[RMDB]
RNA sequence: GGGAACGACUCGAGUAGAGUCGAAAAGAGGAAUUCCUAGUAAACGCAAGUCAUCAUCUUGCAUUGAUUACGUCCCUGCCCUUUGUACACACCGCCCGUCGCACCUACCGAUUGGAUAUUGUGACGAGUUGAGAACGUUCUUCGGAACGUUCUCAACAAAAGAAACAACAACAACAAC
Reactivity to DMS in 0.01 (KOAc 150mM, MgCl2 10mM, bicine 150mM(pH8.5), 24C), signal-to-noise 1, nucleotides 027 to 126: g000a090g000g000a180a140u000u010c000c040u000a060g010u000a080a060a170c160g000c030a040a000g000u030c140a140u000c210a090u000c050u000u000g000c000a150u020u000g020a140u030u000a040c140g000u020c000c010c020u000g030c000c010c030u000u000u000g000u010a020c110a140c060a070c010c080g010c060c040c020g030u000c010g000c090a030c090c050u000a110c000c000g000a100u010u000g020g000a100u000a110u010u000g020u000g000a090c040g010a100
Reactivity to 2A3 in 0.01 (KOAc 150mM, MgCl2 10mM, bicine 150mM(pH8.5), 24C), signal-to-noise 1, nucleotides 027 to 126: g190a010g000g110a050a120u080u010c010c020u030a030g050u140a070a170a020c040g000c030a010a010g000u050c060a090u010c000a030u000c010u000u000g000c010a050u020u140g140a070u080u000a050c090g010u070c000c000c010u000g040c030c020c000u070u030u080g190u060a110c090a000c000a000c010c060g010c100c000c000g000u000c010g000c000a060c010c030u050a050c040c050g220a260u120u100g020g020a010u060a040u110u030g020u010g000a030c010g010a010